[RMDB]
RNA sequence: GGGAACGACUCGAGUAGAGUCGAAAACCUUUGGAAACAAAGGCGAAAGUCGGCCGAAUGUCCGAGGGUCGCGCGGGGAUAGACUACCCGAGAGGGGAAAACAACCCUGGCUCCGGAGGCGGUGAAAACUUCUUUGAAAUUUCGAUUUCAAAGAAGUAAAAGAAACAACAACAACAAC
Reactivity to DMS in 0.01 (KOAc 150mM, MgCl2 10mM, bicine 150mM(pH8.5), 24C), signal-to-noise 6, nucleotides 027 to 126: c000c000u000u000u010g000g000a160a130a160c010a010a020a030g000g000c060g000a090a090a100g020u010c090g020g000c000c000g000a080a080u030g020u020c010c000g020a180g010g000g010u000c060g020c140g050c120g000g000g000g010a090u020a160g010a100c100u000a170c010c000c010g020a150g000a220g000g010g010g010a080a100a130a110c140a100a110c010c000c000u010g000g010c010u000c010c000g000g010a090g000g010c010g000g000u000g000a050a050a080
Reactivity to 2A3 in 0.01 (KOAc 150mM, MgCl2 10mM, bicine 150mM(pH8.5), 24C), signal-to-noise 6, nucleotides 027 to 126: c000c000u010u020u030g040g020a040a040a010c020a040a040a020g020g000c030g110a120a050a010g120u070c030g050g000c010c010g050a160a130u170g100u130c010c010g020a200g030g010g000u030c030g000c030g030c060g100g000g000g000a020u080a100g070a050c070u080a070c030c000c020g010a020g050a010g000g010g000g010a030a070a010a010c040a010a070c010c000c010u030g030g010c000u000c010c000g000g010a010g010g020c020g000g000u040g020a010a030a010